[RMDB]
RNA sequence: GGGAACGACUCGAGUAGAGUCGAAAAAGAGAGCUUUUCCUUCAAUAUUGUAAGGAAAUCCAAGAGUUAAGAGCAACGCACUAUAAAAGUGUUACUAACUACAUCAUGGAAGUGAAAGGAUGCUCAUAUAGUGAAGCUGAUUCAAUCCGAAAUAUCAGUAUCAAGAGCGAUUCGUCGCUCUUGAUACAAAAGAAACAACAACAACAAC
Reactivity to DMS in 0.01 (KOAc 150mM, MgCl2 10mM, bicine 150mM(pH8.5), 24C), signal-to-noise 1, nucleotides 027 to 156: a050g050a190g010a060g050c030u000u000u020u000c000c010u000u000c050a140a200u000a160u000u000g040u050a000a070g010g020a000a000a000u000c060c000a060a120g000a210g000u000u000a070a170g020a140g000c040a000a030c020g000c000a050c010u000a160u000a060a300a050a070g000u000g000u000u000a160c000u000a100a050c010u000a050c010a150u000c180a150u000g030g010a080a170g000u000g000a080a120a040g010g010a060u000g000c010u010c000a300u000a010u000a050g010u020g000a010a170g000c020u030g030a170u000u000c090a050a090u000c060c030g000a070a050a060u000a050u000c050a090
Reactivity to 2A3 in 0.01 (KOAc 150mM, MgCl2 10mM, bicine 150mM(pH8.5), 24C), signal-to-noise 2, nucleotides 027 to 156: a010g170a000g010a010g040c000u020u000u020u010c000c000u010u010c040a110a110u180a140u300u120g080u170a020a020g000g020a000a030a000u020c030c010a040a010g040a000g050u040u130a060a070g030a000g030c030a020a060c060g010c040a020c000u020a000u060a190a140a010a000g000u000g000u090u010a040c030u030a100a000c000u050a030c010a090u210c050a030u130g040g030a090a010g030u040g060a100a060a030g020g050a030u030g000c000u000c020a000u060a020u000a050g060u050g070a040a010g000c030u030g000a070u090u030c060a050a070u040c040c000g060a060a040a000u200a040u150c050a020